Source: RMDB library OK3TST, as collected in RNAgym. This 207-nucleotide RNA was probed chemically with 2A3.
RNA sequence: GGGAACGACUCGAGUAGAGUCGAAAAGUCGAUCCUGACCUCUGCUGGGACGAUAUCAAGUGGGUUAGAUCUCAAACCAAGUUGCCCUUGCUUGUUAAGGGAGUGCAGACUGUGGAGGUAUGUACACGCUGCGACUAAUCGUGUCUGCAAAACAGGCACCAACCACCAGCUUCGGCUGGUGGUUGGUAAAAGAAACAACAACAACAAC
Reactivity to 2A3 in 0.01 (KOAc 150mM, MgCl2 10mM, bicine 150mM(pH8.5), 24C), signal-to-noise 1, nucleotides 027 to 156: g040u020c040g020a090u020c020c010u040g170a100c010c040u010c010u100g000c040u110g030g050g000a030c020g000a000u010a040u210c120a170a150g070u110g050g000g000u010u060a090g020a140u050c050u000c090a090a050a000c010c000a010a090g150u120u120g040c000c000c000u000u000g080c020u070u080g080u300u130a090a100g070g020g000a050g010u040g020c000a010g070a080c040u070g030u110g040g110a050g020g020u120a070u240g050u090a030c030a000c080g000c040u150g010c030g090a020c030u110a000a050u040c020g000u020g020u020c020u020g000c020a000a000a060a050c080a020g020g030c010